[RMDB]
RNA sequence: GGGAACGACUCGAGUAGAGUCGAAAAGAUAUGGAUUGGUACUGCAUCGAUCCGUAACAUCGGUCGGAAACGACCGUGGGGGAGCAGGACCAAUCCUAAGUCAAACCCACUAGUUCGCUAGUGGGAACCGAUGAUUCUUGUUCGCAAGAAUCAUCGGAAAAGAAACAACAACAACAAC
Reactivity to 2A3 in 0.01 (KOAc 150mM, MgCl2 10mM, bicine 150mM(pH8.5), 24C), signal-to-noise 2, nucleotides 027 to 126: g040a000u050a000u220g010g010a000u000u010g030g000u020a030c010u010g020c010a250u300c240g150a130u010c000c020g020u110a100a050c040a260u260c060g020g000u000c010g010g060a100a100a070c020g000a010c010c030g000u020g010g010g000g000g000a040g040c000a000g010g020a000c000c000a000a010u030c000c000u000a000a000g020u020c030a000a060a170c000c000c000a020c000u010a000g000u040u100c300g010c180u000a000g000u010g000g000g040a000a060
Reactivity to DMS in 0.01 (KOAc 150mM, MgCl2 10mM, bicine 150mM(pH8.5), 24C), signal-to-noise 2, nucleotides 027 to 126: g020a000u020a300u000g000g000a000u010u000g010g040u010a040c020u020g020c000a230u010c090g020a110u000c000c000g010u000a090a100c300a040u000c000g010g000u000c000g010g000a130a070a210c040g010a000c010c000g060u000g020g000g000g000g020a020g010c010a020g000g000a000c000c010a000a010u000c000c000u000a000a030g010u000c020a050a090a170c020c000c000a020c000u000a000g010u010u010c210g020c010u010a000g030u020g000g000g010a010a030